[RMDB]
RNA sequence: GGGAACGACUCGAGUAGAGUCGAAAAGAACAUCAGUUCGCUGAUGUUCAAAGGCCGAGUAGUGUUGGGUCGCGAAAGGCCAUACAUUAACAUUCACUCAGAAAACAACGUCCUUCGGGACGUUGAACUGCGAGUAUUAGUUCGCUAAUACUCGCAGAAAAGAAACAACAACAACAAC
Reactivity to DMS in 0.01 (KOAc 150mM, MgCl2 10mM, bicine 150mM(pH8.5), 24C), signal-to-noise 2, nucleotides 027 to 126: g020a000a000c000a020u000c000a010g000u000u000c210g000c030u010g030a000u000g010u000u010c000a020a120a070g000g020c040c010g010a080g030u000a090g000u000g020u000u010g060g010g030u000c040g010c030g010a110a190a150g020g010c000c000a070u000a030c110a070u030u010a080a100c160a100u000u000c110a070c040u000c060a110g000a100a060a110a130c000a000a000c000g000u000c000c000u000u000c200g040g000g000a000c000g000u000u000g000a060a070
Reactivity to 2A3 in 0.01 (KOAc 150mM, MgCl2 10mM, bicine 150mM(pH8.5), 24C), signal-to-noise 2, nucleotides 027 to 126: g000a000a000c000a010u000c010a000g020u060u040c100g050c080u000g010a000u000g000u000u000c010a020a030a000g000g000c000c000g000a010g010u020a010g000u000g170u240u090g170g150g090u160c030g010c010g030a000a030a030g010g000c000c000a010u040a010c010a030u050u150a080a000c010a050u060u160c050a040c100u050c040a030g060a020a120a020a040c000a000a000c010g000u000c010c000u030u080c200g030g000g000a020c000g000u000u000g000a000a010
Source: RMDB library M2PK50, as collected in RNAgym.
This 177-nucleotide RNA was probed chemically with DMS and 2A3.
For DMS, 1,298 sequencing reads were counted.
As a SHAPE reagent, 2A3 marks flexible, mostly unpaired nucleotides at the ribose 2'-OH.
Conditions: 150 mM KOAc, 10 mM MgCl2 and 150 mM bicine (pH 8.5), 24 C.